Structure probing data (DMS and 2A3) for a 207-nucleotide construct. The data come from the RNA Mapping Database (RMDB), library OK3TST. Conditions: 150 mM KOAc, 10 mM MgCl2 and 150 mM bicine (pH 8.5), 24 C. For 2A3 the reverse transcriptase was SuperScript II with manganese. In probing experiments dimethyl sulfate is read out at A N1 and C N3, which are open when not base-paired.
RNA sequence: GGGAACGACUCGAGUAGAGUCGAAAAGAAAGUCAUUAUGUUAAGUGAAAUAAGCCAGGCACAGAAAGACAAAUACUGCAUGUUCCCACUCAUCUGUGAGAGUGAAAACCAUGGGUCUCGAGGAUGUAGAAAGUAGAAUUGUGGCUGGGGAGGGUAACAUAGUCGCAGGAUUCGUCCUGCGACUAUGAAAAGAAACAACAACAACAAC
Reactivity to DMS in 0.01 (KOAc 150mM, MgCl2 10mM, bicine 150mM(pH8.5), 24C), signal-to-noise 1, nucleotides 027 to 156: g000a100a040a060g040u000c000a060u010u000a100u010g030u020u000a130a100g020u010g000a090a090a080u000a120a120g040c070c060a030g000g040c130a070c050a080g070a030a010a050g000a130c010a080a090a110u020a080c060u000g000c030a070u000g010u000u000c000c010c030a160c120u000c030a090u000c070u000g000u010g030a170g000a040g000u030g030a010a010a010a030c000c070a020u000g010g020g030u010c080u010c020g030a070g000g030a070u000g000u030a060g010a060a020a050g030u000a150g010a140a100u000u020g040u000g000g040c010u000g020g010g000g030a080g010g030g050u000a060a190
Reactivity to 2A3 in 0.01 (KOAc 150mM, MgCl2 10mM, bicine 150mM(pH8.5), 24C), signal-to-noise 1, nucleotides 027 to 156: g070a010a090a010g050u050c080a110u050u220a090u220g090u190u160a040a020g020u000g110a060a190a110u120a070a030g040c060c000a030g000g000c010a020c000a070g090a030a040a030g060a030c060a070a120a040u160a020c090u090g100c050a030u160g040u000u000c000c030c000a020c000u010c000a140u030c020u030g020u030g080a070g000a000g050u040g020a010a010a010a010c000c000a020u060g030g020g030u030c030u020c120g020a060g000g010a010u040g000u040a000g010a030a070a020g040u100a000g040a110a010u090u010g000u050g110g110c110u030g030g000g010g010a020g000g040g000u000a000a080